The data come from the RNA Mapping Database (RMDB), library OK2TRN. The record gives the reactivity of an RNA of 177 nucleotides to DMS and 2A3. For DMS the reverse transcriptase was MarathonRT.
RNA sequence: GGGAACGACUCGAGUAGAGUCGAAAAUACAUUAGACGUGUAACAAUGAAUCACAGGGAGGCAAUAAUGUGGCUAAUACGAAAAAAACAACAUUAGAUAUCACUGGUAUGACUUGUGCCGCAUGUUCCACGUAUCGAAUUUUCGAAUUCGAUACGUGAAAAGAAACAACAACAACAAC
Reactivity to DMS in 0.01 (KOAc 150mM, MgCl2 10mM, bicine 150mM(pH8.5), 24C), signal-to-noise 6, nucleotides 027 to 126: u010a080c060a050u000u010a100g020a120c150g020u010g010u000a050a080c080a060a050u010g010a200a050u010c070a070c040a050g000g000g000a060g010g010c080a090a100u000a040a020u000g020u000g010g010c030u000a060a060u000a110c130g030a000a010a050a070a090a070a060c080a030a030c060a050u000u000a050g000a130u000a060u000c030a040c050u000g000g010u000a040u000g020a100c140u000u000g010u010g000c040c050g000c050a040u000g000u000u000c060
Reactivity to 2A3 in 0.01 (KOAc 150mM, MgCl2 10mM, bicine 150mM(pH8.5), 24C), signal-to-noise 5, nucleotides 027 to 126: u090a000c020a020u060u120a070g040a100c050g030u060g030u090a050a020c020a050a110u140g040a050a020u040c030a020c010a050g030g010g010a010g020g030c010a030a040u080a070a010u080g000u040g030g020c030u060a050a040u120a120c110g150a060a020a020a000a000a030a060c060a040a010c010a040u060u050a020g040a090u100a010u080c030a030c050u040g010g050u070a040u050g040a060c040u040u040g020u060g070c010c010g020c010a010u040g030u080u030c030